[RMDB]
RNA sequence: GGGAACGACUCGAGUAGAGUCGAAAAGAUAUGGAAACCGAUCAAGCCACAACUAUUCGGAAACGAACGAAUUGUGGAACUACUUGCAGAGGUUUCCUAAGUCAAAAGAUGAGGUUCGCCUCAUCAAGAAUCAAUUUAGGUUCGCCUAAAUUGAUUCAAAAGAAACAACAACAACAAC
Reactivity to DMS in 0.01 (KOAc 150mM, MgCl2 10mM, bicine 150mM(pH8.5), 24C), signal-to-noise 5, nucleotides 027 to 126: g020a050u000a300u000g020g000a000a010a020c010c010g000a300u000c010a000a000g000c000c010a000c000a010a010c080u000a260u000u010c000g020g000a120a100a150c010g020a010a020c090g020a040a070u000u000g000u000g000g010a050a010c030u010a300c000u000u000g010c180a020g000a300g000g000u000u000u000c000c010u020a020a110g000u010c050a110a060a100a140g000a000u000g000a010g000g010u000u010c270g010c000c010u000c000a010u000c010a070a080
Reactivity to 2A3 in 0.01 (KOAc 150mM, MgCl2 10mM, bicine 150mM(pH8.5), 24C), signal-to-noise 4, nucleotides 027 to 126: g010a020u050a010u070g010g000a020a000a000c010c000g010a030u050c010a010a000g020c010c000a010c010a020a020c080u110a060u040u010c010g030g070a150a070a090c040g020a010a010c050g070a270a300u000u020g000u010g000g030a010a030c030u120a030c000u060u010g000c060a020g000a050g070g000u000u000u000c000c000u000a010a010g020u030c010a020a020a040a180g000a010u000g000a000g060g030u050u120c200g100c060c000u010c010a000u000c000a000a030

The data come from the RNA Mapping Database (RMDB), library TTRDEL. Chemical mapping of a 177-nucleotide RNA with DMS and 2A3. Reactivities are given for positions 27 through 126. The DMS profile rests on 4,586 reads. For 2A3, 8,913 sequencing reads were counted.